[RMDB]
RNA sequence: GGGAACGACUCGAGUAGAGUCGAAAACAUCGAUAUAUCCAGCCUCAUGUGAUGACAAUUUGUAAGCUUGCUAGAAUAAGGGGGAGCUUCGCUUAUCCAUGCGGCAACUAUCUUCAGCCCAGAUGCCUUUACUAGUCCCCUUCGGGGGACUAGUAAAAAAAGAAACAACAACAACAAC
Reactivity to 2A3 in 0.01 (KOAc 150mM, MgCl2 10mM, bicine 150mM(pH8.5), 24C), signal-to-noise 3, nucleotides 027 to 126: c020a120u050c060g000a000u000a000u000a010u140c140c040a020g030c000c000u000c000a000u010g220u150g050a000u010g000a000c060a120a250u160u060u230g120u180a010a000g000c020u060u210g030c010u100a070g150a300a110u220a140a150g040g010g000g060g010a010g000c000u020u030c080g010c070u020u030a000u040c000c000a000u000g000c040g000g000c000a000a000c010u020a050u030c010u090u070c060a060g040c000c000c020a010g000a060u090g020c000c000
Reactivity to DMS in 0.01 (KOAc 150mM, MgCl2 10mM, bicine 150mM(pH8.5), 24C), signal-to-noise 1, nucleotides 027 to 126: c110a100u020c090g000a080u010a070u020a000u000c190c150a170g020c010c000u040c000a050u010g010u030g000a000u000g010a100c040a150a080u080u010u000g030u060a000a050g000c000u000u020g000c000u000a070g000a100a080u020a110a130g000g050g000g000g000a000g020c020u000u030c070g010c070u000u010a020u000c000c030a030u000g030c080g040g000c020a070a030c070u010a010u020c010u000u010c080a090g000c000c020c030a100g020a040u040g000c110c050
The record gives the reactivity of an RNA of 177 nucleotides to 2A3 and DMS. For DMS the reverse transcriptase was MarathonRT. The RNA was probed in 150 mM KOAc, 10 mM MgCl2 and 150 mM bicine (pH 8.5) at 24 C.